Background
Chemical mapping of a 207-nucleotide RNA with DMS. The RNA was probed in 150 mM KOAc, 10 mM MgCl2 and 150 mM bicine (pH 8.5) at 24 C. The DMS profile rests on 1,445 reads.
RNA sequence: GGGAACGACUCGAGUAGAGUCGAAAAAGAUGUGAACUACUGAUUAAAACUGGUGGAAAAGGUUGUUUACUGAAACCAUGAGGAAGUUAAACUUUAAAAUGGAGGACAAAGAACUGAACAUACUGACAUACUGAUUCUUUGAAGAGAAAUCUAGAAAUCACCUGAUUAGUUUCGACUAAUCAGGUGAAAAAGAAACAACAACAACAAC
Reactivity to DMS in 0.01 (KOAc 150mM, MgCl2 10mM, bicine 150mM(pH8.5), 24C), signal-to-noise 1, nucleotides 027 to 156: a080g020a130u000g000u000g030a090a040c020u000a060c070u010g000a150u010u000a030a090a090a140c060u040g100g000u000g000g000a020a050a130a130g010g020u000u010g010u000u000u000a140c050u000g000a160a070a080c010c130a150u000g000a100g000g000a060a050g010u000u000a030a100a150c070u000u000u000a000a010a010a130u020g010g000a070g020g030a120c090a060a030a060g030a050a070c050u030g000a050a010c060a130u000a190c070u000g030a090c050a160u000a030c030u010g000a160u000u000c010u000u000u010g000a030a160g010a130g000a060a000a080u000c040u000a110g000a060a090a100